RNA sequence: GGGAACGACUCGAGUAGAGUCGAAAAUAGCCACGCUCUUCUGCCAGGAGCACAGCUAACCGGGUCUUCCCGGAGCCUGGCGGGCCAACCAAGCAGAGCGACUUGUCAGCCCUCAAGAGAUACUCGGAGUAUACGAGGGAUUCGUCCCUCGUAUACUAAAAGAAACAACAACAACAAC
Reactivity to DMS in 0.01 (KOAc 150mM, MgCl2 10mM, bicine 150mM(pH8.5), 24C), signal-to-noise 5, nucleotides 027 to 126: u000a060g020c050c060a240c140g000c000u000c000u000u010c060u020g030c030c050a070g010g000a070g000c040a090c220a180g030c060u010a110a160c010c000g030g000g000u020c150u030u020c010c000c000g000g000a090g000c100c010u000g010g000c050g000g000g010c050c060a080a150c120c050a080a060g030c050a070g010a070g020c070g010a090c030u020u020g010u020c110a150g010c020c040c020u020c070a070a090g000a090g000a130u030a050c010u000c070g000g000
Reactivity to 2A3 in 0.01 (KOAc 150mM, MgCl2 10mM, bicine 150mM(pH8.5), 24C), signal-to-noise 6, nucleotides 027 to 126: u130a020g020c040c020a070c040g010c010u010c000u110u030c020u060g030c010c010a020g030g010a050g060c090a040c050a100g050c030u100a140a050c020c000g010g000g050u100c110u210u150c050c000c000g010g000a010g030c000c010u020g020g000c030g010g020g000c020c010a050a070c020c010a080a010g040c010a010g030a010g070c030g030a130c010u030u030g050u040c030a040g040c000c030c010u060c050a050a030g040a020g010a090u090a250c030u020c070g060g020

Source: RMDB library OK1LIB, as collected in RNAgym. This 177-nucleotide RNA was probed chemically with DMS and 2A3. For 2A3 the reverse transcriptase was SuperScript II with manganese. DMS (dimethyl sulfate) methylates the pairing face of unpaired adenines and cytosines. The 2A3 profile rests on 4,897 reads.